[RMDB]
RNA sequence: GGGAACGACUCGAGUAGAGUCGAAAAGAUAUGGAUCAGGUACUGUAGGACGAGGAUCUGGCUCGGAAACGAGCCAGGGAGUCCCGUACUGAUCCUAAGUCAAAAGAAGCGUGUUCGCACGCUUCAAGUGAUACAUGCUGUUCGCAGCAUGUAUCACAAAAGAAACAACAACAACAAC
Reactivity to 2A3 in 0.01 (KOAc 150mM, MgCl2 10mM, bicine 150mM(pH8.5), 24C), signal-to-noise 3, nucleotides 027 to 126: g010a020u060a030u160g000g010a000u020c040a060g300g240u120a050c070u220g300u300a240g050g010a000c020g090a300g070g010a010u000c010u010g000g000c000u020c000g000g000a050a060a060c010g000a000g000c030c000a010g000g010g000a000g000u000c010c040c020g010u030a030c010u050g000a000u000c010c000u000a040a030g020u010c050a010a030a040a300g010a000a000g000c000g010u020g030u090u280c300g000c150a010c000g000c000u000u000c000a000a000
Reactivity to DMS in 0.01 (KOAc 150mM, MgCl2 10mM, bicine 150mM(pH8.5), 24C), signal-to-noise 2, nucleotides 027 to 126: g010a050u000a300u020g020g000a040u000c000a040g000g030u000a030c040u010g040u020a080g020g020a020c010g010a090g000g000a010u010c010u010g000g030c000u000c000g020g000a110a080a270c000g010a020g000c030c000a020g000g010g010a060g030u000c000c010c070g000u000a020c000u030g000a000u000c000c000u010a020a100g020u000c070a110a070a220a190g000a010a000g010c010g030u000g010u000u020c240g000c000a010c000g010c010u010u010c000a060a070